[RMDB]
RNA sequence: GGGAACGACUCGAGUAGAGUCGAAAACUGACGGCCACCGCGCGGUCGUAUGGGUUGAGCGGGUACCCGGCGGGAAAGGGGUGUGUGAGCGCGCUGGCAUACAUGCCGCAGAUGUCGUAGACGUAGACGGGCUCUGAGAGCACGCCUAUGUAAGUGGCCUACGUUAUACUUUCGAGUAUAACGUAGGAAAAGAAACAACAACAACAAC
Reactivity to DMS in 0.01 (KOAc 150mM, MgCl2 10mM, bicine 150mM(pH8.5), 24C), signal-to-noise 2, nucleotides 027 to 156: c010u010g000a110c030g000g010c000c160a070c020c020g000c030g000c020g020g020u000c050g030u080a050u020g030g020g010u010u030g000a130g030c100g020g030g020u010a140c020c010c010g020g020c100g020g010g010a070a100a300g010g010g020g000u000g010u000g020u000g000a090g000c000g010c020g050c000u010g100g000c020a070u020a070c050a090u020g030c010c010g030c020a060g010a210u010g000u000c040g000u000a170g000a050c020g050u000a040g000a010c000g010g000g000c000u020c000u020g020a230g030a070g010c020a040c010g010c000c010u020a020u000g010u010a050a120g000u000g010g010
Reactivity to 2A3 in 0.01 (KOAc 150mM, MgCl2 10mM, bicine 150mM(pH8.5), 24C), signal-to-noise 7, nucleotides 027 to 156: c040u040g110a070c010g010g000c020c020a060c030c020g020c010g020c020g030g210u030c010g020u100a130u130g030g010g000u130u170g050a040g050c050g000g030g000u040a050c020c000c000g030g010c110g010g010g030a080a170a040g050g020g010g000u140g030u030g010u020g090a060g030c020g000c010g010c100u110g020g000c010a050u120a090c050a030u200g010c000c010g010c000a020g010a110u140g040u090c060g030u060a050g010a150c010g010u000a000g000a010c000g010g010g000c020u030c110u210g260a280g000a000g030c000a000c010g000c000c000u000a010u010g050u040a090a120g060u070g060g000